The record gives the reactivity of an RNA of 177 nucleotides to DMS. Conditions: 150 mM KOAc, 10 mM MgCl2 and 150 mM bicine (pH 8.5), 24 C. It was measured as part of the RMDB library TTRINS. The DMS profile rests on 1,533 reads.
RNA sequence: GGGAACGACUCGAGUAGAGUCGAAAAGAUAUGGAGUUAGUACGCAGCUACCCACCGGUUGAACUACAGCGUAAAGUCGGAAACGACUUUGCGCUGCAACCGAGGCUGCGUACUAACUCCUAAGUCACGACAUCUUUAAGUUCGCUUAAAGAUGUCGAAAAGAAACAACAACAACAAC
Reactivity to DMS in 0.01 (KOAc 150mM, MgCl2 10mM, bicine 150mM(pH8.5), 24C), signal-to-noise 2, nucleotides 027 to 126: g010a070u010a300u030g010g010a040g010u020u000a000g000u000a010c020g020c000a000g050c000u000a090c100c050c020a300c080c000g000g000u000u000g010a070a030c130u020a300c000a030g000c000g010u010a010a020a010g000u000c060g020g020a120a090a230c010g000a000c000u000u010u000g010c000g000c010u000g000c000a010a040c000c000g000a060g030g030c000u000g020c000g000u000a000c000u000a000a000c000u020c000c000u010a000a110g000u000c070a210